Structure probing data (2A3 and DMS) for a 177-nucleotide construct.
Conditions: 150 mM KOAc, 10 mM MgCl2 and 150 mM bicine (pH 8.5), 24 C.
For DMS, 1,374 sequencing reads were counted.
RNA sequence: GGGAACGACUCGAGUAGAGUCGAAAACAGCGGGAAGCCGGCGUGAGUGAGGUCGCCUAUCUCGGUGAAGAACGCGUAGUUGCCGCCGGUGGCCUGGACUCCGCAUUCGAUCACGUGCCCGGCCACCGAGGGGCAAGGCGUUCGCGCCUUGCCCCUCAAAAGAAACAACAACAACAAC
Reactivity to 2A3 in 0.01 (KOAc 150mM, MgCl2 10mM, bicine 150mM(pH8.5), 24C), signal-to-noise 1, nucleotides 027 to 126: c010a030g070c010g000g010g000a090a000g010c030c010g030g000c040g050u150g010a090g000u070g010a010g000g050u050c010g060c000c000u040a120u090c130u060c030g000g100u090g070a090a030g090a080a080c030g000c040g070u130a090g100u060u050g000c010c050g030c050c010g010g000u010g000g000c000c000u030g040g070a100c010u030c120c050g100c040a030u160u150c090g220a220u190c080a050c180g050u010g000c000c000c000g000g000c000c000a020c000c010
Reactivity to DMS in 0.01 (KOAc 150mM, MgCl2 10mM, bicine 150mM(pH8.5), 24C), signal-to-noise 2, nucleotides 027 to 126: c120a110g000c050g010g000g010a080a160g030c070c090g000g000c060g020u000g030a090g040u010g010a030g020g010u000c000g010c030c020u020a050u010c040u010c060g000g010u010g020a100a150g010a080a060c080g020c070g010u000a100g020u000u010g000c040c070g060c120c040g020g020u000g000g020c000c010u020g020g010a070c010u020c060c020g000c070a110u000u010c070g000a110u010c060a050c110g000u010g000c030c010c020g020g000c020c020a060c080c030